[RMDB]
This 177-nucleotide RNA was probed chemically with 2A3 and DMS. It was measured as part of the RMDB libraries RFM100 and RFMREP. DMS (dimethyl sulfate) methylates the pairing face of unpaired adenines and cytosines. Values are in units of 0.01, from 0 to 300, in steps of 10. For DMS the reverse transcriptase was MarathonRT.
RNA sequence: GGGAACGACUCGAGUAGAGUCGAAAACAUAGUGCUGACAUUUGUAGUUCCUUGACUUUCGUUCUCUGCCAGUGACGUGUCCAUUCGGCGCCAGCAGCCCACCCAUAGGUUGCAUAAUGGCAAAGAUCAGUUACGGUAGAUUCGUCUACCGUAACUGAAAAGAAACAACAACAACAAC
Reactivity to 2A3 in 0.01 (KOAc 150mM, MgCl2 10mM, bicine 150mM(pH8.5), 24C), signal-to-noise 7, nucleotides 027 to 126: c020a020u150a050g050u030g080c040u040g070a080c030a190u100u110u250g090u060a050g000u040u090c030c000u030u060g070a070c040u000u040u040c020g040u140u070c010u000c000u020g020c020c010a050g010u010g040a050c030g030u060g090u020c010c000a040u040u050c030g030g020c020g000c000c000a010g000c000a000g000c000c010c010a060c010c020c010a100u230a090g020g000u010u000g010c010a020u190a110a110u150g020g010c000a020a020a010g030a050u010
Reactivity to DMS in 0.01 (KOAc 150mM, MgCl2 10mM, bicine 150mM(pH8.5), 24C), signal-to-noise 2, nucleotides 027 to 126: c020a080u000a140g030u010g010c010u000g020a080c050a160u040u020u030g000u040a080g010u010u010c210c000u020u000g010a100c110u000u000u000c080g010u010u010c020u000c020u000g020c030c080a040g000u000g000a050c070g010u000g000u010c050c030a110u010u000c070g000g000c280g000c000c020a100g020c070a050g000c000c000c050a060c090c080c090a100u040a180g000g000u000u000g010c010a080u010a050a100u020g030g000c030a040a180a190g000a070u010